Chemical mapping of a 207-nucleotide RNA with 2A3. As a SHAPE reagent, 2A3 marks flexible, mostly unpaired nucleotides at the ribose 2'-OH. It was measured as part of the RMDB library OK3TST. The reactions ran in a buffer of 150 mM KOAc, 10 mM MgCl2 and 150 mM bicine (pH 8.5), at 24 C. For 2A3 the reverse transcriptase was SuperScript II with manganese.

RNA sequence: GGGAACGACUCGAGUAGAGUCGAAAACGAUCAGUACGUUCGCGUACUGAUCGAAGCUACUGGAGACAGUAGCAAGUCUAAGAACUUGUUAGGCGGAAACAAGGAAAAAUGGAGGAAGGCCGGACCUCCAUACUUAGACAACCGCGAACUGGCCAAACUAAUCACGCAGGUUCGCCUGCGUGAUUAGAAAAGAAACAACAACAACAAC
Reactivity to 2A3 in 0.01 (KOAc 150mM, MgCl2 10mM, bicine 150mM(pH8.5), 24C), signal-to-noise 2, nucleotides 027 to 156: c020g000a000u000c000a000g010u000a000c000g030u030u090c210g000c010g080u000a000c020u000g000a000u000c000g000a000a020g000c000u000a000c000u000g000g020a040g010a030c000a000g010u010a000g000c000a000a030g000u000c000u000a010a010g010a060a040c000u000u010g010u040u070a120g100g080c110g030g070a050a030a000c000a000a000g000g070a080a110a030a020a030u040g000g000a000g010g030a080a240g020g000c030c050g070g050a240c010c010u000c000c000a000u010a020c000u010u000a000g000a000c030a070a090c130c040g120c120g120a000a000c000u010g020g000c020c000a050a010a000